[RMDB]
RNA sequence: GGGAACGACUCGAGUAGAGUCGAAAAGCACUUAAAUAUAACUGGCAAAACUAACAGUUUUAACCAAAACGUAGCAUUAGCUGCCUAAUAAGCGCAGCGAGCUCUUCCUGACAUUGCCUAUGUGUCUGUGAAGAGCACAUCCAAGUAGGCUACGCUUUGAUCUAUGAUGGUUCGCCAUCAUAGAUCAAAAAGAAACAACAACAACAAC
Reactivity to DMS in 0.01 (KOAc 150mM, MgCl2 10mM, bicine 150mM(pH8.5), 24C), signal-to-noise 1, nucleotides 027 to 156: g000c080a040c050u000u000a070a100a090u000a100u020a050a120c030u000g000g020c020a080a020a110a080c110u000a170a110c030a100g010u000u000u020u000a050a140c080c030a140a030a040a020c000g040u000a020g020c020a240u000u000a100g020c040u000g040c070c010u000a070a080u020a100a040g020c150g000c040a100g080c020g020a080g010c020u010c000u000u020c010c010u000g000a020c020a030u000u000g010c220c140u000a090u000g020u000g000u010c020u000g020u030g020a020a050g000a050g020c010a020c040a040u000c070c080a030a100g050u010a130g000g010c000u000a020c020g040c010u000u040
Reactivity to 2A3 in 0.01 (KOAc 150mM, MgCl2 10mM, bicine 150mM(pH8.5), 24C), signal-to-noise 5, nucleotides 027 to 156: g020c010a020c080u180u200a030a120a020u210a050u060a090a050c030u030g040g010c050a070a050a090a140c110u110a070a050c020a060g020u030u000u070u120a060a070c040c020a050a010a010a050c020g010u020a000g000c020a040u110u040a020g000c010u020g020c000c000u150a260a180u190a290a060g020c090g000c060a000g000c010g010a010g000c000u000c000u000u000c000c000u000g000a000c000a010u090u130g070c010c010u110a120u200g000u000g000u010c000u000g110u090g090a000a010g010a000g020c000a000c000a000u020c020c020a080a020g040u020a020g090g050c010u010a010c030g000c010u010u000